[RMDB]
RNA sequence: GGGAACGACUCGAGUAGAGUCGAAAAGCUUAGCAGUUCGCUGCUAAGCGACGUUGACGGCCCUCACCGUUGACUAAUCCCAAUGAGGACAGGUGACUGACAGAUAUUAAGCGUUCGCGCUUAAUAAUAGGUUUGAAUAUUUCGAUAUUCAAACCUAAAAAGAAACAACAACAACAAC
Reactivity to DMS in 0.01 (KOAc 150mM, MgCl2 10mM, bicine 150mM(pH8.5), 24C), signal-to-noise 6, nucleotides 027 to 126: g010c000u000u000a000g000c000a000g010u000u020c210g030c010u000g010c000u000a000a000g010c000g000a030c180g010u000u000g010a020c010g000g000c090c030c050u000c070a300c010c000g010u000u000g010a010c020u010a140a120u010c010c000c000a090a070u000g000a060g000g010a300c080a030g010g000u000g000a120c050u000g000a100c180a080g000a160u000a020u000u000a010a020g000c000g020u000u010c210g020c010g020c000u000u000a000a010u000a020a150
Reactivity to 2A3 in 0.01 (KOAc 150mM, MgCl2 10mM, bicine 150mM(pH8.5), 24C), signal-to-noise 5, nucleotides 027 to 126: g010c000u010u000a000g000c000a010g010u060u200c250g080c110u000g000c000u000a000a000g010c000g000a000c020g010u000u010g010a000c020g010g010c040c040c000u020c020a100c010c000g010u000u010g010a000c010u030a030a070u040c010c000c010a010a090u210g030a030g020g020a040c030a030g000g090u050g060a090c040u040g020a050c050a070g170a070u060a010u080u010a010a000g000c010g030u010u100c220g010c010g030c110u000u000a000a000u010a010a040